[RMDB]
RNA sequence: GGGAACGACUCGAGUAGAGUCGAAAAGUGUUAGCUGCUUGCUGGUCUGCCCAUUCCAAGCCGAGAGUUGGGCUGUGUGAUCUGGGCGAAGGCUGGGGUCGCACAGCUCCUAAAGAGGAGGGCAAUGCGUGAGGCUGGUUUCACAGAGCAGCGACCAGAUGGUUGUGAAGUUCGCUUCACAACCAUCAAAAGAAACAACAACAACAAC
Reactivity to 2A3 in 0.01 (KOAc 150mM, MgCl2 10mM, bicine 150mM(pH8.5), 24C), signal-to-noise 1, nucleotides 027 to 156: g040u080g000u170u030a110g020c000u020g000c000u000u000g010c010u010g000g000u000c000u010g050c000c060c010a000u070u010c010c000a140a100g110c110c030g070a130g000a080g180u300u160g000g000g000c000u000g000u000g000u000g000a000u000c010u060g060g030g020c000g100a070a010g280g000c060u100g040g000g020g020u000c000g000c020a010c000a000g010c000u070c000c000u010a000a070a000g140a030g020g000a040g060g000g080c030a020a060u130g040c160g060u120g100a000g020g000c030u060g000g040u020u130u170c130a200c000a020g050a000g020c000a000g000c000g000a010c000c000a000
The data come from the RNA Mapping Database (RMDB), library ARCHII. The record gives the reactivity of an RNA of 207 nucleotides to 2A3. The RNA was probed in 150 mM KOAc, 10 mM MgCl2 and 150 mM bicine (pH 8.5) at 24 C.